RNA sequence: GGGAACGACUCGAGUAGAGUCGAAAAGGAACUAUGUUCAAACACGAAGCCUCCACGUGUUAGUUUCGACGUCUGUAGACAGAUGAGCAUAGUUAAGAUCUGGAGGAGGCACGGAUCAAAAUAAAAACGUUGAAGUUGUGUUCGCACAACUUCGACGAAAAGAAACAACAACAACAAC
Reactivity to DMS in 0.01 (KOAc 150mM, MgCl2 10mM, bicine 150mM(pH8.5), 24C), signal-to-noise 4, nucleotides 027 to 126: g010g020a020a030c010u000a000u000g000u000u000c000a020a080a040c000a000c010g020a130a210g020c000c000u000c000c000a140c010g000u000g000u000u000a110g000u010u000u000c080g020a130c250g000u000c060u060g000u060a140g030a080c010a120g000a050u010g010a010g000c000a010u000a000g010u000u020a060a100g000a020u000c010u000g010g010a140g020g010a010g010g020c000a150c020g000g020a050u000c010a170a090a090a100u040a060a060a080a100a090
Reactivity to 2A3 in 0.01 (KOAc 150mM, MgCl2 10mM, bicine 150mM(pH8.5), 24C), signal-to-noise 6, nucleotides 027 to 126: g160g010a010a010c000u000a000u010g010u010u010c010a020a040a000c000a000c010g050a100a010g010c000c000u000c000c000a000c000g010u000g010u000u010a050g010u010u040u050c100g070a050c040g060u020c030u080g160u040a070g020a050c020a020g020a060u000g000a000g000c000a000u000a000g000u000u010a040a020g000a010u000c000u000g000g010a080g010g000a000g000g000c000a000c000g010g000a000u010c020a010a000a020a020u170a010a040a010a000a010